[RMDB]
RNA sequence: GGGAACGACUCGAGUAGAGUCGAAAAGGUGGGGCAGGACAAAGACUCCUGGCAGCUCAAACGGCCUGGCAGAUGCUUGGAGAGAGGGGGCUUCUUGAGACAGCACCAUUUCUGGGAAGAGAGUCACUGAGAUAAUAUCCUUCGGGAUAUUAUCUCAAAAAGAAACAACAACAACAAC
Reactivity to 2A3 in 0.01 (KOAc 150mM, MgCl2 10mM, bicine 150mM(pH8.5), 24C), signal-to-noise 8, nucleotides 027 to 126: g050g020u060g020g010g010g020c040a030g040g020a030c060a040a210a010g060a020c010u010c000c000u010g020g020c010a020g010c010u040c110a100a080a070c050g040g000c010c020u030g040g000c020a020g020a110u100g020c030u040u060g030g000a040g010a010g010a040g040g020g000g000g000c010u050u020c020u060u120g030a070g020a030c030a020g020c030a030c020c030a050u060u160u080c040u050g000g010g030a100a000g060a020g000a010g050u030c010a010c110
Reactivity to DMS in 0.01 (KOAc 150mM, MgCl2 10mM, bicine 150mM(pH8.5), 24C), signal-to-noise 9, nucleotides 027 to 126: g010g010u020g010g000g010g010c030a070g000g010a090c120a080a100a140g000a140c070u000c020c010u000g000g020c040a060g000c040u010c080a050a090a130c140g000g000c030c030u000g000g010c080a070g010a060u010g000c020u010u000g010g010a080g000a080g000a100g010g010g010g000g000c030u010u010c030u000u010g000a130g000a060c100a070g000c050a090c050c020a100u010u010u020c050u010g010g000g000a070a050g000a080g000a090g010u010c070a070c180